[RMDB]
RNA sequence: GGGAACGACUCGAGUAGAGUCGAAAAUCACGCAAAAUUAUGACGGCCAAGUCCAGGCAGUCGAGUAUAACAAGUACUCGCUCUACGGUUGGAGCGGACUGCCCAUCAUUUCGAUGUCGUCGGGCCAGCCAUUCUUGGUUUUCGAACCAAGAAUGGCAAAAGAAACAACAACAACAAC
Reactivity to 2A3 in 0.01 (KOAc 150mM, MgCl2 10mM, bicine 150mM(pH8.5), 24C), signal-to-noise 2, nucleotides 027 to 126: u010c020a030c090g110c060a070a060a090a000u300u110a190u220g050a020c010g020g020c040c000a040a030g030u000c040c010a000g000g000c000a000g010u040c020g060a000g000u050a040u050a200a300c160a230a020g000u010a020c000u000c010g050c010u030c000u020a090c140g300g000u280u270g080g000a000g000c070g000g020a030c030u000g000c010c020c000a010u100c020a040u030u230u240c110g000a060u090g010u050c030g000u020c040g000g040g020c000c000a010
Reactivity to DMS in 0.01 (KOAc 150mM, MgCl2 10mM, bicine 150mM(pH8.5), 24C), signal-to-noise 2, nucleotides 027 to 126: u010c050a110c030g020c080a040a010a050a170u000u010a070u000g020a050c120g010g000c010c050a140a110g000u000c190c140a140g010g060c040a000g030u020c030g000a030g030u000a010u000a100a230c240a100a230g010u000a000c000u010c010g050c060u000c030u000a080c020g040g030u000u030g010g010a030g000c050g000g000a070c010u000g010c090c000c060a050u000c040a130u000u000u000c100g000a080u000g010u000c090g050u000c080g000g030g000c030c020a080